[RMDB]
RNA sequence: GGGAACGACUCGAGUAGAGUCGAAAAGACGAGCAGGCGGAUAAUCUUGUGCAGUAUGCAUGCUCGUAACUCCAGCGCACAAGUGGACGCACAAGAUUUCAAUCCAGCAUAGCGCAGGAGCCGCAGACAGGAGUAGGACUUUCGAGUCCUACUCCUGAAAAGAAACAACAACAACAAC
Reactivity to 2A3 in 0.01 (KOAc 150mM, MgCl2 10mM, bicine 150mM(pH8.5), 24C), signal-to-noise 3, nucleotides 027 to 126: g060a000c010g010a000g010c030a020g010g000c010g000g060a030u100a140a020u220c000u010u010g000u000g000c050a080g050u120a020u100g000c000a000u010g020c000u000c000g000u000a000a000c010u000c030c010a040g010c060g000c010a020c020a210a160g130u100g060g000a010c030g020c000a000c000a000a010g010a000u050u150u130c090a060a120u000c030c020a000g020c050a130u110a070g000c010g000c020a040g000g010a000g000c020c020g040c060a050g050a150
Reactivity to DMS in 0.01 (KOAc 150mM, MgCl2 10mM, bicine 150mM(pH8.5), 24C), signal-to-noise 3, nucleotides 027 to 126: g000a040c000g040a030g020c000a010g000g010c010g000g030a080u030a140a040u010c000u000u000g040u000g010c010a140g000u010a050u060g010c010a050u000g010c010u020c010g000u000a010a040c010u020c060c020a080g030c010g000c010a160c300a100a140g040u030g000g000a050c180g000c050a000c010a000a000g010a130u020u010u020c250a160a080u000c020c000a130g000c050a070u070a130g010c000g010c000a020g000g000a030g000c020c000g000c220a110g010a260

An RNA of 177 nucleotides, treated with 2A3 and DMS and read out base by base. Reactivities are given for positions 27 through 126. The reactions ran in a buffer of 150 mM KOAc, 10 mM MgCl2 and 150 mM bicine (pH 8.5), at 24 C.